[RMDB]
RNA sequence: GGGAACGACUCGAGUAGAGUCGAAAAGGCGGAGAAAUCAAUGUUUUCCUAAACGGUGAAGACAAAGGAAAAGUCACUGCCAAUGAGGAAGGUAAAGCAAGCAUUGCAUUAAGCAACUUACUUAAAGGCUCCUAUCGCGUUUCGACGCGAUAGGAGCAAAAGAAACAACAACAACAAC
Reactivity to 2A3 in 0.01 (KOAc 150mM, MgCl2 10mM, bicine 150mM(pH8.5), 24C), signal-to-noise 1, nucleotides 027 to 126: g060g000c060g090g040a010g000a000a110a080u000c000a000a000u070g020u020u020u020u000c000c000u000a000a000a300c130g140g000u070g210a150a080g020a010c000a020a140a070g120g000a000a030a000a220g050u130c070a060c000u000g040c010c000a000a060u000g000a000g130g000a090a000g200g000u210a070a030a030g050c040a000a060g040c000a130u000u030g060c110a110u030u150a090a000g000c000a000a050c060u030u010a000c000u000u020a080a010a010g020

Structure probing data (2A3) for a 177-nucleotide construct. The data come from the RNA Mapping Database (RMDB), library OK1LIB.